Structure probing data (2A3) for a 177-nucleotide construct. Reactivities are given for positions 27 through 126. The RNA was probed in 150 mM KOAc, 10 mM MgCl2 and 150 mM bicine (pH 8.5) at 24 C.

RNA sequence: GGGAACGACUCGAGUAGAGUCGAAAACGCUGCACCGAUGUAUUUACGCGGUACGCCCCACCGGCACCAACAACGACACCGCCCUCGUGUGGAUGAAAAUGAACCAGACCCUAUUGUUUCUGGGGGCCUUAGCUCUGCGGUUCGCCGCAGAGCUAAGAAAAGAAACAACAACAACAAC
Reactivity to 2A3 in 0.01 (KOAc 150mM, MgCl2 10mM, bicine 150mM(pH8.5), 24C), signal-to-noise 1, nucleotides 027 to 126: c010g000c050u230g000c000a040c080c020g060a070u170g080u100a190u090u260u180a080c130g000c050g000g010u110a070c010g000c030c000c000c000a020c000c000g000g050c020a000c000c010a060a170c030a040a070c000g080a000c030a010c020c000g000c000c000c010u050c020g110u150g050u080g020g000a080u060g200a050a110a050a080u180g020a000a000c000c000a000g180a050c000c000c000u090a120u120u080g020u000u010u000c080u040g020g000g000g000g050c020